[RMDB]
RNA sequence: GGGAACGACUCGAGUAGAGUCGAAAAUAAAACACCUCAUAUUGUACGUCAGCGUUUAACUGAGUACACUAUGAUGGAUCUUGUAUAUGCCCUGAGGCACUUUGAUCAAAAUAGCGAAGUGCUUAAGAAAGAACAGCGUUCGCGCUGUUCAAAAGAAACAACAACAACAAC
Reactivity to 2A3 in 0.01 (KOAc 150mM, MgCl2 10mM, bicine 150mM(pH8.5), 24C), signal-to-noise 6, nucleotides 027 to 129: u080a000a050a000a000c030a010c010c000u000c010a000u000a010u000u010g010u020a010c050g300u020c020a000g050c100g100u100u180u200a050a040c000u000g000a000g000u010a000c010a010c010u000a010u000g010a020u160g020g000a060u070c050u100u120g060u010a080u020a020u130g040c000c000c000u030g020a060g000g010c020a010c000u000u010u060g050a050u130c130a020a130a210a210u130a070g060c010g000a000a000g000u030g000c000u000u000a010a010g030a030a070a000
Reactivity to DMS in 0.01 (KOAc 150mM, MgCl2 10mM, bicine 150mM(pH8.5), 24C), signal-to-noise 4, nucleotides 027 to 129: u060a010a030a020a020c110a090c010c010u020c000a030u010a020u030u010g000u010a030c030g070u010c000a020g110c040g100u050u090u060a070a190c020u030g030a060g020u030a010c010a030c000u020a020u050g000a020u090g020g000a080u010c130u060u000g000u070a080u000a000u060g040c000c000c000u040g040a060g020g020c020a020c010u040u030u050g040a060u020c130a090a090a140a120u000a060g040c020g000a000a000g030u000g010c020u000u060a010a130g030a040a120a130